An RNA of 177 nucleotides, treated with 2A3 and DMS and read out base by base. DMS adducts were read by reverse transcription with MarathonRT. The 2A3 profile rests on 3,908 reads. The data come from the RNA Mapping Database (RMDB), libraries RFM100 and RFMREP. DMS (dimethyl sulfate) methylates the pairing face of unpaired adenines and cytosines.
[RMDB]
RNA sequence: GGGAACGACUCGAGUAGAGUCGAAAAAGGGUCGCCUCCUCGAGCUCUGAGUUUUCCAUCAAGCGGAGCCAGACUGAAAGCUAGGUGCAUUUCCCUGGAGAUAUAGGGAACAGAGGGAAGAGGGCGAGUGAUGUGAUGUUUUCGAACAUCACAUCACAAAAGAAACAACAACAACAAC
Reactivity to 2A3 in 0.01 (KOAc 150mM, MgCl2 10mM, bicine 150mM(pH8.5), 24C), signal-to-noise 5, nucleotides 027 to 126: a000g070g010g020u030c010g010c000c010u110c000c010u000c020g040a010g030c020u000c010u020g120a130g060u060u050u090u000c020c030a040u100c090a070a040g070c060g020g050a000g010c010c000a060g010a130c040u130g120a090a030a000g030c030u080a050g030g070u080g040c060a120u040u050u090c010c000c000u020g140g050a090g050a090u180a030u160a130g010g000g010a010a010c010a020g040a040g000g000g010a050a060g030a040g010g010g000c030g000a030
Reactivity to DMS in 0.01 (KOAc 150mM, MgCl2 10mM, bicine 150mM(pH8.5), 24C), signal-to-noise 4, nucleotides 027 to 126: a110g020g000g000u000c010g010c010c010u020c060c010u010c030g010a300g000c020u010c010u010g000a100g040u020u010u020u010c050c020a080u050c130a150a120g000c160g000g010a120g010c010c080a070g010a060c100u000g020a060a090a080g000c050u000a050g000g000u010g030c130a150u020u020u010c010c030c010u000g030g030a120g010a090u060a080u020a070g000g000g010a020a080c110a080g000a020g000g010g000a070a120g010a060g000g000g000c070g030a090